Chemical mapping of a 177-nucleotide RNA with 2A3 and DMS. The RNA was probed in 150 mM KOAc, 10 mM MgCl2 and 150 mM bicine (pH 8.5) at 24 C. DMS adducts were read by reverse transcription with MarathonRT. The DMS profile rests on 1,018 reads. The 2A3 profile rests on 1,383 reads.

RNA sequence: GGGAACGACUCGAGUAGAGUCGAAAAACGGGAAGGGAAUUUUGGGAACCUUGGGCUGGGCUGGGACUGCAUACAGGGCCAAUGGGCCGGGCCGGGAUCGUCUAGGGUCGAUAAUGGGCUGGGAAGGUCGUGUAAGCUAAUUCGUUAGCUUACACGAAAAAGAAACAACAACAACAAC
Reactivity to 2A3 in 0.01 (KOAc 150mM, MgCl2 10mM, bicine 150mM(pH8.5), 24C), signal-to-noise 2, nucleotides 027 to 126: a030c060g030g040g110a140a000g110g030g070a140a080u170u150u250u190g050g050g020a030a080c020c000u020u040g000g010g080c040u030g020g010g000c020u050g030g000g040a060c040u060g000c020a070u100a180c060a070g010g000g070c020c030a040a250u210g020g020g010c080c010g050g020g000c040c060g010g010g000a070u030c020g030u000c080u060a060g090g020g020u030c020g000a000u080a090a060u060g000g000g040c060u060g050g000g020a090a010g020g020
Reactivity to DMS in 0.01 (KOAc 150mM, MgCl2 10mM, bicine 150mM(pH8.5), 24C), signal-to-noise 1, nucleotides 027 to 126: a120c060g000g010g010a190a100g010g000g020a160a090u040u020u000u020g000g020g000a180a090c080c080u010u000g000g000g010c070u020g030g000g020c120u000g000g030g000a070c140u000g020c220a090u010a070c110a070g000g000g010c050c030a060a130u000g020g000g000c020c030g010g010g000c040c010g000g000g000a070u010c080g000u010c090u000a090g010g000g010u010c030g000a090u000a020a070u000g000g000g020c140u020g000g030g010a060a040g010g000